The record gives the reactivity of an RNA of 177 nucleotides to DMS and 2A3. For 2A3 the reverse transcriptase was SuperScript II with manganese. For DMS, 9,464 sequencing reads were counted. The RNA was probed in 150 mM KOAc, 10 mM MgCl2 and 150 mM bicine (pH 8.5) at 24 C. High 2A3 reactivity points to a flexible backbone, as in loops and unpaired stretches.

RNA sequence: GGGAACGACUCGAGUAGAGUCGAAAAGAGACAGAAGAUAUAGAGGCGCCUAUAUCAAUAAGCAAGCAACGCGCCGAUAAGAAUAGACGAAAUAAGAAUACAGAACUAAGACAUAAAGACAAGACAAGAUAUAUAUAUAGUUCGCUAUAUGUAUAUCAAAAGAAACAACAACAACAAC
Reactivity to DMS in 0.01 (KOAc 150mM, MgCl2 10mM, bicine 150mM(pH8.5), 24C), signal-to-noise 6, nucleotides 027 to 126: g010a130g010a120c100a070g000a140a120g010a020u000a000u000a020g010a110g020g000c010g020c010c020u020a020u000a010u000c020a090a110u040a080a110g020c130a090a070g000c110a060a120c180g000c010g010c010c000g010a140u040a050a080g010a090a050u010a070g000a070c070g000a040a050a080u030a030a050g000a080a050u040a050c100a050g000a050a040c070u020a030a080g000a050c080a060u030a040a050a040g000a080c100a070a070g000a080c140a080a080
Reactivity to 2A3 in 0.01 (KOAc 150mM, MgCl2 10mM, bicine 150mM(pH8.5), 24C), signal-to-noise 7, nucleotides 027 to 126: g090a000g020a010c030a040g150a140a040g000a060u010a000u010a020g070a120g030g000c020g000c010c000u010a010u000a000u020c030a030a080u170a090a020g090c070a010a030g030c020a060a060c080g000c000g000c020c010g010a060u090a110a060g060a040a100u100a070g080a040c060g070a060a020a060u150a100a030g050a040a030u120a070c030a040g050a090a010c040u060a130a000g050a030c010a030u240a120a130a020g080a040c060a100a030g020a040c030a100a020